[RMDB]
RNA sequence: GGGAACGACUCGAGUAGAGUCGAAAAGGGCCAACAGUGUGGUGCCCAGGUGGCUUUGGUUGGGCUUUUCGGCCCUAAAGAGGAUCUGCUUAAAGAGGGCGUGUGAGUUGGAGCUAAUGGUAGGCCGCUGAAAUACAUUGAAGGACGCCUCAGGUAAAACACACACUUUAUUCGUAAAGUGUGUGUUAAAAGAAACAACAACAACAAC
Reactivity to DMS in 0.01 (KOAc 150mM, MgCl2 10mM, bicine 150mM(pH8.5), 24C), signal-to-noise 2, nucleotides 027 to 156: g040g000g020c000c030a070a070c040a120g050u000g020u010g020g020u000g040c000c000c000a090g030g020u010g030g020c020u000u000u000g010g010u010u010g020g030g070c010u000u010u020u000c130g030g000c010c010c000u020a020a060a110g000a110g030g000a070u000c030u000g020c050u000u000a040a110a120g000a070g010g040g010c000g010u000g030u000g000a090g010u000u000g010g020a080g030c050u000a050a080u000g000g010u000a070g020g020c030c020g020c050u000g010a030a060a120u010a070c040a110u000u000g000a090a060g010g020a080c030g010c030c010u000c040a110g020g000u010a050a090
Reactivity to 2A3 in 0.01 (KOAc 150mM, MgCl2 10mM, bicine 150mM(pH8.5), 24C), signal-to-noise 3, nucleotides 027 to 156: g040g010g030c020c000a050a000c060a140g100u050g030u070g130g070u060g000c000c020c010a010g070g060u080g030g020c040u120u070u070g020g010u040u070g000g020g020c010u060u050u070u080c100g020g000c010c000c000u030a040a050a000g030a020g010g020a040u010c000u060g010c010u050u080a040a040a010g050a040g000g020g010c040g000u030g030u000g010a070g000u050u090g020g010a040g010c040u090a070a030u050g030g000u030a060g020g010c030c010g000c040u020g010a020a020a000u120a050c060a020u070u120g010a060a020g030g000a010c020g050c000c020u030c020a000g060g040u140a070a180